[RMDB]
RNA sequence: GGGAACGACUCGAGUAGAGUCGAAAACAUAGAACAUGAAGCUUAGGGCUCAUUUGGAGGCUCCAGGAUGUCAUCAGAAAUCCAAGAUCCUUCUAUCUUUUCUGUUAUCCAGCUUUACUAGGUGUUCGGUGCUGAUAAUAUUCGUAUUAUCAGCACCAAAAGAAACAACAACAACAAC
Reactivity to 2A3 in 0.01 (KOAc 150mM, MgCl2 10mM, bicine 150mM(pH8.5), 24C), signal-to-noise 3, nucleotides 027 to 126: c020a040u180a050g030a040a010c020a040u090g040a060a010g030c020u060u060a090g060g000g030c020u020c080a120u140u080u200g130g020a040g020g000c010u010c010c000a000g020g020a020u050g060u120c020a100u040c030a100g080a100a100a020u020c030c010a020a020g010a030u070c020c000u090u020c030u020a090u060c030u120u140u080u020c030u040g060u080u020a040u070c010c010a000g010c000u050u050u050a060c040u080a070g130g020u030g030u060u070c050
Reactivity to DMS in 0.01 (KOAc 150mM, MgCl2 10mM, bicine 150mM(pH8.5), 24C), signal-to-noise 2, nucleotides 027 to 126: c070a100u010a080g000a030a070c080a050u010g000a060a060g010c020u000u000a130g020g010g000c030u000c040a050u000u010u000g020g000a080g000g010c050u010c020c100a110g000g000a010u000g000u000c070a110u010c200a120g000a050a070a030u000c070c060a070a080g000a060u000c050c060u000u000c030u000a080u010c070u010u000u000u000c060u020g000u000u010a070u010c060c060a090g000c020u000u000u010a030c100u000a070g000g010u010g000u010u000c050